Source: RMDB library RFM100, as collected in RNAgym. Chemical mapping of a 177-nucleotide RNA with 2A3 and DMS. Values cover nucleotides 27 to 126. The RNA was probed in 150 mM KOAc, 10 mM MgCl2 and 150 mM bicine (pH 8.5) at 24 C.

[RMDB]
RNA sequence: GGGAACGACUCGAGUAGAGUCGAAAAGAAAGAAGGAAUAUGAUGAAAGUUGUAUAUCGGUGAUGGUCUUUUGAUUCAUAUGAUCGACAAAAAUUUCAACUCGCUACGUUCUUUCUGAUUCUUUUAAUUUUAGACCCUAGUUCGCUAGGGUCUAAAAAAAAGAAACAACAACAACAAC
Reactivity to 2A3 in 0.01 (KOAc 150mM, MgCl2 10mM, bicine 150mM(pH8.5), 24C), signal-to-noise 2, nucleotides 027 to 126: g040a000a050a000g030a000a000g000g000a000a000u060a050u010g210a210u050g040a060a110a110g020u000u000g000u030a070u010a030u150c020g000g020u010g070a010u020g050g060u000c080u070u200u070u230g040a100u110u130c040a020u070a040u210g120a070u060c020g010a010c050a040a180a010a080a110u040u150u070c030a000a020c000u030c030g000c000u020a010c070g060u000u000c000u000u070u000c030u020g050a040u010u030c030u020u010u020u050a060a070
Reactivity to DMS in 0.01 (KOAc 150mM, MgCl2 10mM, bicine 150mM(pH8.5), 24C), signal-to-noise 2, nucleotides 027 to 126: g010a040a050a010g000a020a000g000g000a110a010u010a120u020g010a150u020g010a090a060a010g020u010u000g000u020a130u020a280u010c010g020g020u000g010a080u000g000g030u000c020u010u030u060u030g000a010u010u040c020a020u020a070u030g000a020u010c010g020a050c240a050a060a040a110a100u020u050u000c020a020a060c090u020c120g020c050u000a120c060g000u000u000c010u010u000u010c010u000g000a090u000u000c000u000u010u000u010a030a060
DMS adducts were read by reverse transcription with MarathonRT. The 2A3 profile rests on 490 reads.